An RNA of 177 nucleotides, treated with 2A3 and DMS and read out base by base. The reactions ran in a buffer of 150 mM KOAc, 10 mM MgCl2 and 150 mM bicine (pH 8.5), at 24 C. Reactivities are given for positions 27 through 126. DMS (dimethyl sulfate) methylates the pairing face of unpaired adenines and cytosines.
RNA sequence: GGGAACGACUCGAGUAGAGUCGAAAAGUGUACAUGAACUUAUAAGACGAGUACAACGUAUGGUACAUCACAAGUAUCUUAUUAGUUUUUAAGUACCAUGUGUACAUAGACUUAUGAGACGAGUACACAGGCGACGUCAGUUCGCUGACGUCGCCUGAAAAGAAACAACAACAACAAC
Reactivity to 2A3 in 0.01 (KOAc 150mM, MgCl2 10mM, bicine 150mM(pH8.5), 24C), signal-to-noise 2, nucleotides 027 to 126: g000u000g000u000a010c000a010u160g050a170a040c000u000u000a000u000a000a000g000a000c050g010a000g000u000a000c020a130a070c130g270u300a000u170g000g000u000a030c030a110u150c040a110c060a080a010g190u070a160u030c020u030u300a160u300u250a090g030u000u030u000u000u300a130a110g000u000a000c000c000a060u060g010u000g000u000a020c020a000u300a000g060a000c000u000u000a000u000g050a060g040a000c040g000a000g000u000a000c000a000
Reactivity to DMS in 0.01 (KOAc 150mM, MgCl2 10mM, bicine 150mM(pH8.5), 24C), signal-to-noise 1, nucleotides 027 to 126: g060u000g000u010a010c000a000u000g000a140a070c000u000u000a050u040a000a000g020a060c050g000a270g070u000a060c000a050a030c210g010u020a030u000g000g000u000a000c010a070u130c160a000c140a040a020g190u000a000u060c300u080u050a030u110u000a050g020u010u000u100u010u030a130a020g050u000a000c000c000a000u000g000u030g000u050a000c000a040u080a210g000a160c000u000u000a000u000g000a000g000a080c100g000a100g020u000a000c030a080